[RMDB]
RNA sequence: GGGAACGACUCGAGUAGAGUCGAAAAAGGACUUCUGAUGACACACCUGAACAGCCUGGAUGUGCAGCUUGCCCAGGAGCUCGGGGACUUCACUGAUGACGACUUGGACGUGGUGUUCACGCCAAAGGAAUGUAGGACUUUGCAGCCCUCUUUGCCAUAUUAGCCACUAUUUCGAUAGUGGCUAAUAAAAAGAAACAACAACAACAAC
Reactivity to DMS in 0.01 (KOAc 150mM, MgCl2 10mM, bicine 150mM(pH8.5), 24C), signal-to-noise 3, nucleotides 027 to 156: a060g010g020a070c040u000u000c040u000g020a120u000g020a100c010a040c080a120c000c010u000g000a060a080c020a090g010c040c040u000g020g010a090u000g020u000g020c060a130g010c110u020u010g040c020c000c020a060g010g010a300g020c030u000c050g010g020g020g000a070c060u000u020c040a070c020u010g030a080u010g000a110c030g000a040c030u010u000g010g030a040c000g030u000g020g020u000g020u000u000c010a050c040g010c040c010a060a050a060g010g020a080a080u000g000u000a050g030g000a050c030u010u000u010g000c080a200g050c010c000c000u000c040u000u010u000g020c040c050a200
Reactivity to 2A3 in 0.01 (KOAc 150mM, MgCl2 10mM, bicine 150mM(pH8.5), 24C), signal-to-noise 3, nucleotides 027 to 156: a000g030g020a020c020u010u020c030u050g090a150u110g040a040c010a000c010a040c080c020u030g020a080a010c000a060g070c010c040u030g010g000a080u070g030u070g030c020a060g040c040u130u190g040c020c020c000a000g000g040a010g000c040u010c030g000g010g020g040a020c020u040u040c040a010c040u080g010a040u040g040a080c010g020a020c020u030u040g020g000a070c040g030u050g050g080u070g080u150u170c030a020c080g000c010c010a030a020a020g030g000a090a010u100g030u070a020g000g060a010c020u050u020u120g000c080a020g020c000c030c020u020c010u000u060u070g040c020c000a020
This 207-nucleotide RNA was probed chemically with DMS and 2A3. The DMS profile rests on 6,986 reads. For 2A3 the reverse transcriptase was SuperScript II with manganese.